[RMDB]
RNA sequence: GGGAACGACUCGAGUAGAGUCGAAAAGGAAAACAGUUCGCUGUUUUCCAAAUAAAUGGUAUGAUGUGCACGGCUUGCACAUAGAACCAGAAAGAGCCGAAAAAAGCUUUCCCUUCGGGGAAAGCAACUCCAUAGCUUAGUUCGCUAAGCUAUGGAGAAAAGAAACAACAACAACAAC
Reactivity to 2A3 in 0.01 (KOAc 150mM, MgCl2 10mM, bicine 150mM(pH8.5), 24C), signal-to-noise 2, nucleotides 027 to 126: g000g010a000a000a010a000c010a010g010u050u060c130g030c110u010g000u000u010u000u000c010c000a010a020a010u050a000a020a030u090g040g040u130a090u280g100a020u020g020u000g010c030a010c150g140g030c110u110u090g010c020a000c000a000u010a020g050a020a030c000c010a010g040a020a050a010g080a020g030c050c050g070a110a010a000a020a030a000g000c000u010u000u010c010c000c050u000u000c250g050g000g010g000a000a000a000g000c000a000a000
Reactivity to DMS in 0.01 (KOAc 150mM, MgCl2 10mM, bicine 150mM(pH8.5), 24C), signal-to-noise 2, nucleotides 027 to 126: g030g000a000a000a000a000c000a010g020u000u020c200g030c020u000g010u000u000u000u000c000c010a020a060a030u010a070a060a140u000g010g030u010a030u010g000a020u000g010u000g010c010a080c290g020g010c130u000u000g020c010a000c000a000u000a060g010a110a070c020c010a040g000a060a050a100g010a040g010c030c010g020a000a020a040a060a090a070g000c000u000u000u000c000c000c000u000u010c200g040g010g000g000a000a010a000g010c000a000a030
An RNA of 177 nucleotides, treated with 2A3 and DMS and read out base by base. Source: RMDB library M2PK50, as collected in RNAgym. The reactions ran in a buffer of 150 mM KOAc, 10 mM MgCl2 and 150 mM bicine (pH 8.5), at 24 C.